[RMDB]
RNA sequence: GGGAACGACUCGAGUAGAGUCGAAAAGGAGGUGAUCCCUCCCUCCUGCCGGCCCGCCAGCCUGACCUGUGCUUGGCUCCGCGGGCCGCAGCCUCGGCCCCGGCGCGCCCCCGGCUGCUCUCGCCGCCGAGAAACUCACAUUCGUGUGAGUUUCUCGAAAAGAAACAACAACAACAAC
Reactivity to DMS in 0.01 (KOAc 150mM, MgCl2 10mM, bicine 150mM(pH8.5), 24C), signal-to-noise 2, nucleotides 027 to 126: g010g010a030g020g010u040g000a080u020c050c000c020u010c040c000c000u000c040c040u040g010c150c040g000g060c040c040c030g010c010c300a060g000c020c030u000g000a110c040c090u080g030u020g000c090u020u010g010g010c010u000c100c270g000c050g000g000g000c000c010g000c060a040g000c040c020u010c070g000g000c020c010c040c030g030g030c010g000c070g000c000c000c000c010c020g020g030c060u000g000c070u020c030u000c050g000c030c030g010c060
Reactivity to 2A3 in 0.01 (KOAc 150mM, MgCl2 10mM, bicine 150mM(pH8.5), 24C), signal-to-noise 3, nucleotides 027 to 126: g010g000a000g020g000u100g050a130u100c010c010c010u020c000c010c000u010c000c000u030g090c050c030g000g010c000c010c000g000c010c030a000g000c000c000u070g080a160c030c060u170g070u170g100c060u100u100g020g000c010u070c040c030g000c000g000g000g020c000c000g010c000a000g000c000c020u030c020g050g000c000c030c000c000g020g010c020g000c000g000c000c000c000c000c010g010g010c020u030g000c010u000c010u000c030g020c020c010g020c020